[RMDB]
Chemical mapping of a 177-nucleotide RNA with DMS and 2A3. The DMS profile rests on 10,210 reads. Reactivities are given for positions 27 through 126. It was measured as part of the RMDB library OK2TST. Conditions: 150 mM KOAc, 10 mM MgCl2 and 150 mM bicine (pH 8.5), 24 C. The 2A3 profile rests on 11,526 reads.
RNA sequence: GGGAACGACUCGAGUAGAGUCGAAAAGUGUCCGGAAAUCGUUGACAUGCUCAUCUAUGAGCCGGAAACCGUAGCUGCUCAGCAGGAGCGCUAUUAAUUUACGCACCAGAUCAUUCUGAAGAGGUUCGUCAUUAUUUCAUUUCGAUGAAAUAAUGACAAAAGAAACAACAACAACAAC
Reactivity to DMS in 0.01 (KOAc 150mM, MgCl2 10mM, bicine 150mM(pH8.5), 24C), signal-to-noise 8, nucleotides 027 to 126: g020u000g010u000c000c000g010g010a100a100a080u000c040g010u000u000g010a060c070a140u000g010c080u000c030a100u000c090u000a090u000g010a060g010c010c040g000g000a040a070a100c080c150g000u000a020g000c010u020g040c010u000c010a180g010c270a130g020g000a020g020c010g000c020u000a010u000u000a060a090u000u010u010a080c100g010c100a090c050c030a070g000a090u000c110a120u010u010c060u000g010a080a080g010a130g010g010u000u010c150
Reactivity to 2A3 in 0.01 (KOAc 150mM, MgCl2 10mM, bicine 150mM(pH8.5), 24C), signal-to-noise 5, nucleotides 027 to 126: g060u050g070u010c010c000g010g010a050a090a010u050c040g010u010u050g020a020c030a130u180g030c040u000c020a040u020c020u090a080u090g050a030g110c000c000g020g000a060a040a000c030c020g010u010a000g000c120u180g000c000u020c030a130g060c070a080g150g220a010g000c010g000c000u000a010u040u070a060a050u060u060u090a060c070g010c030a020c020c000a020g010a090u120c040a110u250u060c030u060g050a080a050g080a040g150g030u090u110c060